[RMDB]
Structure probing data (DMS and 2A3) for a 177-nucleotide construct.
RNA sequence: GGGAACGACUCGAGUAGAGUCGAAAAGGUUCAUGGUUCGCCAUGAACCAAAAGUACAGCUAUGAGUACAAGUGUCAUAGCAAAAGAUCGAAAGAUCAAUAAAAAGUAGCUCCUUCGGGAGCUACAAGUUAAACGGUCAGUUCGCUGACCGUUUAACAAAAGAAACAACAACAACAAC
Reactivity to DMS in 0.01 (KOAc 150mM, MgCl2 10mM, bicine 150mM(pH8.5), 24C), signal-to-noise 1, nucleotides 027 to 126: g000g010u000u000c020a010u010g000g000u000u000c300g060c010c000a030u000g000a010a000c010c000a000a050a060a190g010u000a000c010a200g010c000u000a010u000g020a020g000u010a030c030a080a170g020u000g000u000c010a020u000a010g000c030a170a070a080a060g020a000u010c000g000a190a100a170g000a030u040c010a090a100u030a050a100a060a100a060g020u020a020g000c000u000c000c000u000u010c220g000g010g000a010g020c000u000a000c000a030a020
Reactivity to 2A3 in 0.01 (KOAc 150mM, MgCl2 10mM, bicine 150mM(pH8.5), 24C), signal-to-noise 1, nucleotides 027 to 126: g000g020u020u000c010a000u010g000g050u030u070c190g050c050c000a000u020g010a000a020c000c000a000a000a030a000g000u010a010c020a000g000c000u010a000u000g020a020g000u050a020c080a300a070g080u160g000u300c000a000u010a000g000c000a030a000a010a060g000a020u000c020g040a040a060a000g000a000u030c030a040a000u130a050a060a010a010a010g000u000a000g000c020u030c000c000u000u080c260g060g040g000a000g000c010u000a000c000a000a010